[RMDB]
RNA sequence: GGGAACGACUCGAGUAGAGUCGAAAAGCUGGGUCCCAUCAGCAGAGCCACCAAGAGUCCGCACGUGGCCGGUCAGGGGAAACGUCUGGACAUUCAGGAUCUUUCCUCUACCAGGUGAGCACUCAUGCGCUGUAGGUAGAUUCGUCUACCUACAGCGAAAAGAAACAACAACAACAAC
Reactivity to DMS in 0.01 (KOAc 150mM, MgCl2 10mM, bicine 150mM(pH8.5), 24C), signal-to-noise 4, nucleotides 027 to 126: g010c030u000g010g000g010u000c010c010c030a180u020c040a060g030c040a130g010a100g000c020c020a060c040c110a110a110g000a140g000u000c080c050g000c150a090c120g020u000g020g010c060c060g010g010u000c160a010g010g000g010g010a010a020a020c200g010u000c010u000g000g020a160c250a140u000u000c090a110g030g000a050u000c250u000u000u000c000c000u000c010u000a050c000c010a120g020g010u000g010a110g010c170a100c040u000c020a120u020g010
Reactivity to 2A3 in 0.01 (KOAc 150mM, MgCl2 10mM, bicine 150mM(pH8.5), 24C), signal-to-noise 3, nucleotides 027 to 126: g020c030u020g030g020g140u010c000c010c000a030u040c010a000g050c010a000g020a010g030c010c010a030c020c020a080a170g050a040g110u040c040c030g080c090a110c150g070u200g060g010c010c000g040g040u080c140a010g000g000g000g000a010a010a020c050g030u010c000u040g040g060a100c070a190u180u140c050a120g060g010a140u050c020u030u020u010c000c000u020c000u000a010c010c020a000g070g010u020g020a030g010c020a010c030u060c030a090u180g030
This 177-nucleotide RNA was probed chemically with DMS and 2A3. The reactions ran in a buffer of 150 mM KOAc, 10 mM MgCl2 and 150 mM bicine (pH 8.5), at 24 C. For 2A3 the reverse transcriptase was SuperScript II with manganese. Values cover nucleotides 27 to 126.